About this RNA:
Chemical mapping of a 207-nucleotide RNA with 2A3 and DMS. The DMS profile rests on 2,427 reads. The 2A3 profile rests on 2,289 reads. Reactivities are given for positions 27 through 156.
[RMDB]
RNA sequence: GGGAACGACUCGAGUAGAGUCGAAAAUCGGAUGGGAAAGCAUGCCGAGCGCUGACUUAGGAAUGCUGAUCCUUGGCCAUCCGAAACGUACGGCUGGAUACUGGCAUGCGAAAGGAUGGUCGGUAUCCUAACGCAUAUUAUCUGGCAUGCGAAAGGACCAUGACAUUCCUUUCGAGGAAUGUCAUGGAAAAGAAACAACAACAACAAC
Reactivity to 2A3 in 0.01 (KOAc 150mM, MgCl2 10mM, bicine 150mM(pH8.5), 24C), signal-to-noise 3, nucleotides 027 to 156: u080c030g030g030a030u040g030g050g100a070a080a070g000c020a010u030g050c000c010g030a070g010c210g030c080u170g090a300c040u090u050a090g000g040a100a080u080g010c030u050g040a110u080c020c000u050u100g070g000c000c000a000u000c000c010g000a080a040a000c000g040u110a030c230g040g000c010u020g000g020a110u100a180c080u150g060g000c060a010u000g000c010g010a030a020a030g020g000a010u040g030g050u040c060g000g030u040a000u020c010c020u010a050a010c040g000c000a010u030a050u190u110a070u010c040u050g030g000c020a010u030g020c010g010a040a010a000g030g020a010
Reactivity to DMS in 0.01 (KOAc 150mM, MgCl2 10mM, bicine 150mM(pH8.5), 24C), signal-to-noise 1, nucleotides 027 to 156: u000c020g010g040a110u020g000g000g000a160a160a090g020c010a000u000g010c060c000g000a110g000c060g030c150u000g020a100c020u010u000a000g050g000a000a050u000g060c080u000g020a170u010c050c000u020u010g010g040c010c010a000u010c020c020g000a060a120a120c030g000u000a040c060g020g000c020u000g010g020a200u010a080c100u000g000g070c120a100u000g010c030g010a100a140a170g000g030a030u000g000g020u000c020g020g040u000a050u000c020c010u000a010a190c030g000c030a020u000a140u030u010a030u020c150u000g000g000c040a090u010g030c000g000a060a020a050g010g020a230